[RMDB]
RNA sequence: GGGAACGACUCGAGUAGAGUCGAAAACGGGUCGACGGUGACCAUCACGCUGACCCCGGUCGACGGCGGCACCGAGGUCCGGCUGGUCCACGACGGGCUGACCGCGCAGCAGGCCGCCCGGCACGCCACGACAUAGUAGGUUCGCCUACUAUGUCGUAAAAGAAACAACAACAACAAC
Reactivity to DMS in 0.01 (KOAc 150mM, MgCl2 10mM, bicine 150mM(pH8.5), 24C), signal-to-noise 6, nucleotides 027 to 126: c100g010g010g010u000c000g010a050c030g010g000u000g010a120c210c150a070u000c050a050c040g000c000u000g000a040c010c010c020c030g010g020u010c010g020a110c180g010g020c020g030g000c020a110c040c030g010a080g000g000u010c160c010g010g010c030u000g010g020u000c010c030a150c200g000a150c210g020g010g000c010u000g000a030c010c010g010c260g010c060a060g020c070a110g000g000c010c020g020c010c010c030g000g010c030a080c080g010c020c040
Reactivity to 2A3 in 0.01 (KOAc 150mM, MgCl2 10mM, bicine 150mM(pH8.5), 24C), signal-to-noise 4, nucleotides 027 to 126: c020g000g000g030u020c030g050a140c050g070g120u040g070a160c060c010a050u160c030a010c020g030c050u050g020a010c000c010c000c010g030g000u020c030g010a120c060g000g000c000g000g010c070a060c100c030g020a070g020g020u010c030c000g000g010c020u080g020g000u000c020c030a090c120g300a070c070g030g010g000c000u020g030a120c010c000g030c030g000c030a060g020c020a010g040g010c000c000g000c000c010c000g000g000c060a120c040g000c020c010